An RNA of 177 nucleotides, treated with DMS and 2A3 and read out base by base. The reactions ran in a buffer of 150 mM KOAc, 10 mM MgCl2 and 150 mM bicine (pH 8.5), at 24 C. DMS adducts were read by reverse transcription with MarathonRT. 2A3 adducts were read by reverse transcription with SuperScript II with manganese. For 2A3, 1,765 sequencing reads were counted.
RNA sequence: GGGAACGACUCGAGUAGAGUCGAAAAUAAAAUAGCGUACUAGAGACGCUGAUCUCUUGAUAACUACGAACUCUAGAGAUACGGUCCAAUUGAAUACAAGGACAGUUGGACCUAUUCGUAGAAAAAAGCCAUAAGAUAUCUUCGGAUAUCUUAUGGCAAAAGAAACAACAACAACAAC
Reactivity to DMS in 0.01 (KOAc 150mM, MgCl2 10mM, bicine 150mM(pH8.5), 24C), signal-to-noise 2, nucleotides 027 to 126: u030a070a050a090a070u000a000g010c000g030u000a140c000u000a010g000a050g000a100c000g020c000u020g000a110u000c040u010c000u020u000g000a100u000a080a090c000u000a000c000g010a010a040c010u000c000u000a000g000a300g000a130u010a020c300g030g000u010c000c000a000a000u000u010g000a040a120u000a070c300a090a110g000g000a240c010a010g030u000u000g010g000a020c000c000u000a020u010u000c010g010u000a010g000a000a020a060a060a080a060
Reactivity to 2A3 in 0.01 (KOAc 150mM, MgCl2 10mM, bicine 150mM(pH8.5), 24C), signal-to-noise 2, nucleotides 027 to 126: u180a000a050a030a090u170a030g000c010g000u000a040c000u010a000g010a020g000a020c000g010c010u000g030a150u010c020u000c000u050u150g150a130u110a160a080c010u020a000c020g010a000a000c010u000c000u030a020g010a000g030a080u110a170c090g010g000u000c000c000a000a010u000u020g050a110a020u190a260c150a160a060g180g060a040c020a000g000u040u010g000g000a000c000c000u000a020u010u010c000g010u010a010g000a130a020a030a000a000a000